[RMDB]
RNA sequence: GGGAACGACUCGAGUAGAGUCGAAAACGAUCAGUACGUUCGCGUACUGAUCGAAGCUACUGGAGACAGUAGCAAGUCUAAGACCUAGUAACGCUGAUACUAGGAAAAAUGGACGAAGUGCGCACGUCCAUACUUAGACAACAGCGAAGCACACAAACUGCCUAGUCACAUUCGUGUGACUAGGCAGAAAAGAAACAACAACAACAAC
Reactivity to 2A3 in 0.01 (KOAc 150mM, MgCl2 10mM, bicine 150mM(pH8.5), 24C), signal-to-noise 1, nucleotides 027 to 156: c000g010a000u000c020a010g030u010a010c010g020u060u030c110g000c000g160u010a000c000u000g030a020u000c040g010a030a000g010c000u000a000c000u010g000g000a050g010a070c000a010g000u000a000g010c020a000a010g010u030c000u000a010a010g000a100c000c000u000a000g010u040a130a060c140g070c240u130g070a080u040a010c010u000a000g000g200a000a040a030a000a000u000g000g000a010c040g020a120a020g020u070g060c050g000c060a050c050g020u000c000c000a010u050a070c000u000u000a000g020a030c000a050a040c090a110g120c040g100a170a040g010c080a010c010a020c040a060a070a030